RNA sequence: GGGAACGACUCGAGUAGAGUCGAAAAGGGGUCGUCGUUGAAACGUGUCUAGCUGAUGACCAUGGCUGAAGCCUCCACGGCCAUGCAAGGCUACACGUGGAGACGACGGAGGCACCCAAAACUGUCCCUAUGUCACUUCGGUGACAUAGGGACAGAAUCUCCUUGGUAUGUUCGCAUACCAAGGAGAAAAAGAAACAACAACAACAAC
Reactivity to 2A3 in 0.01 (KOAc 150mM, MgCl2 10mM, bicine 150mM(pH8.5), 24C), signal-to-noise 1, nucleotides 027 to 156: g130g020g010g000u030c000g000u000c000g110u180u030g000a000a010a000c000g000u000g020u030c120u160a000g030c000u000g030a230u010g000a090c000c000a000u000g000g000c010u050g010a130a010g050c000c000u060c010c010a000c000g000g050c000c000a010u020g020c010a140a200g000g000c000u010a010c000a000c000g020u000g000g010a000g000a000c000g010a000c000g010g000a000g010g000c000a050c020c020c000a050a100a020a030c010u010g000u000c000c000c010u000a000u010g010u000c020a000c050u060u030c300g090g000u010g000a000c000a000u010a000g010g000g000a000c000a000g000a000a010

Structure probing data (2A3) for a 207-nucleotide construct. 2A3 adducts were read by reverse transcription with SuperScript II with manganese. It was measured as part of the RMDB library RNAMAK.